RNA sequence: GGGAACGACUCGAGUAGAGUCGAAAAGAAGACGUGACGAAAAGUCACGUCAAUACAGAGUCUACGCAACUCUGAAAAACACAACAAAAGUGUAAAAGCGUAGCAGGAUCGAGAGAUCCUGAAAAGAAUCCACGUCCUAUUUCGAUAGGACGUGGAUAAAAGAAACAACAACAACAAC
Reactivity to 2A3 in 0.01 (KOAc 150mM, MgCl2 10mM, bicine 150mM(pH8.5), 24C), signal-to-noise 3, nucleotides 027 to 126: g200a090a000g010a000c000g000u000g000a000c040g070a070a270a170a000g000u000c000a000c000g000u000c000a010a000u050a000c000a000g020a010g020u000c010u000a000c000g000c010a060a140c020u000c000u000g020a030a000a000a010a000c020a010c020a180a070c040a010a130a110a070g010u040g020u040a030a050a030a000g000c010g000u000a000g010c000a000g010g000a000u000c010g010a000g000a010g000a150u000c000c000u000g010a000a000a010a010g120a030
Reactivity to DMS in 0.01 (KOAc 150mM, MgCl2 10mM, bicine 150mM(pH8.5), 24C), signal-to-noise 3, nucleotides 027 to 126: g000a150a150g030a000c000g030u000g010a040c000g000a100a120a060a190g000u010c000a020c030g000u000c000a010a100u030a180c030a000g000a000g000u030c020u000a030c000g020c030a250a050c000u000c000u040g000a010a100a160a130a050c010a000c000a130a110c300a030a060a270a030g000u000g000u000a040a010a010a220g000c000g010u010a010g010c000a000g020g030a010u000c000g040a300g020a260g000a000u000c000c000u000g000a000a020a060a110g040a120

The record gives the reactivity of an RNA of 177 nucleotides to 2A3 and DMS. The RNA was probed in 150 mM KOAc, 10 mM MgCl2 and 150 mM bicine (pH 8.5) at 24 C. Source: RMDB library OK1LIB, as collected in RNAgym. In probing experiments dimethyl sulfate is read out at A N1 and C N3, which are open when not base-paired.